This 207-nucleotide RNA was probed chemically with 2A3 and DMS.
RNA sequence: GGGAACGACUCGAGUAGAGUCGAAAAAGGGCAGGGUGAAAUUCCCGAUCGGCGGUAAAGUCCGCGAGCCGAACGAAAAAGGUUUGGCAGGAACCGGUGAGAUUCCGGUACCGACAGUGUAGUCUGGAUGACCACUUCAGCUUCGGCUGAAGUGGAAGACAUCAACAAUGUUCGCAUUGUUGAUGUCAAAAGAAACAACAACAACAAC
Reactivity to 2A3 in 0.01 (KOAc 150mM, MgCl2 10mM, bicine 150mM(pH8.5), 24C), signal-to-noise 1, nucleotides 027 to 156: a020g070g000g030c080a040g010g010g000u020g030a010a030a030u050u010c030c000c020g020a080u060c010g000g030c010g000g000u000a000a000a020g010u010c000c000g010c000g000a030g000c000c000g000a000a000c010g100a080a050a070a100a050g090g000u000u000u010g000g000c000a000g000g020a000a000c010c000g000g010u000g000a020g000a000u010u000c000c000g000g000u000a000c000c000g000a000c000a000g050u060g090u040a060g010u000c050u040g060g080a120u140g090a060c020c000a000c000u000u000c000a000g000c000u000u110c210g130g000c000u000g000a000a000g000u000g000g000a000a000
Reactivity to DMS in 0.01 (KOAc 150mM, MgCl2 10mM, bicine 150mM(pH8.5), 24C), signal-to-noise 2, nucleotides 027 to 156: a080g010g030g040c040a060g010g000g020u000g010a040a120a300u030u010c000c000c000g010a080u000c040g000g000c000g020g030u000a090a240a030g010u010c000c000g020c000g010a300g000c000c000g030a010a070c030g010a070a110a120a230a160g020g000u000u010u000g000g010c030a030g050g000a030a010c020c000g000g000u010g000a300g000a300u000u010c000c000g000g000u010a000c000c030g020a020c030a060g000u000g030u000a080g030u000c020u010g010g020a200u010g020a240c010c000a010c010u000u000c000a000g000c000u000u000c300g070g020c010u000g000a000a020g050u020g000g000a000a030
For 2A3, 1,645 sequencing reads were counted. It was measured as part of the RMDB library M2RFPK.